[RMDB]
RNA sequence: GGGAACGACUCGAGUAGAGUCGAAAAACGCUACCUUUCGAGGUAGCGUCACCUACUUCGCGCAACCGUGGAGUCGUUCCCAUGGUUGCGUGAAGUAGUUUGAGUGGCAGACGUUCGCGUCUGCCAAUUUAUACGUCCUUUUCGAAGGACGUAUAAAAAAAGAAACAACAACAACAAC
Reactivity to 2A3 in 0.01 (KOAc 150mM, MgCl2 10mM, bicine 150mM(pH8.5), 24C), signal-to-noise 4, nucleotides 027 to 126: a000c000g010c000u000a000c000c010u070u050u160c290g120a020g000g000u000a000g000c000g000u000c000a010c000c000u000a000c000u000u000c000g000c010g000c000a000a010c000c010g040u030g060g010a060g030u040c030g040u070u030c000c000c000a000u010g000g000u010u000g000c000g000u000g000a000a000g000u000a000g000u000u130u160g110a060g020u080g000g000c000a000g000a010c000g030u060u070c230g040c010g100u000c000u000g000c000c000a000a000
Reactivity to DMS in 0.01 (KOAc 150mM, MgCl2 10mM, bicine 150mM(pH8.5), 24C), signal-to-noise 8, nucleotides 027 to 126: a030c010g010c000u000a000c000c000u000u000u010c170g010a020g020g010u000a000g010c010g020u000c050a060c290c000u000a000c000u000u000c000g010c000g010c000a010a010c010c000g030u010g000g010a160g000u000c090g000u000u000c030c000c000a010u000g010g010u000u000g010c000g020u000g000a000a010g010u000a000g010u000u010u000g010a150g020u010g000g010c000a010g000a010c000g020u000u010c230g010c010g010u000c000u000g010c000c000a000a000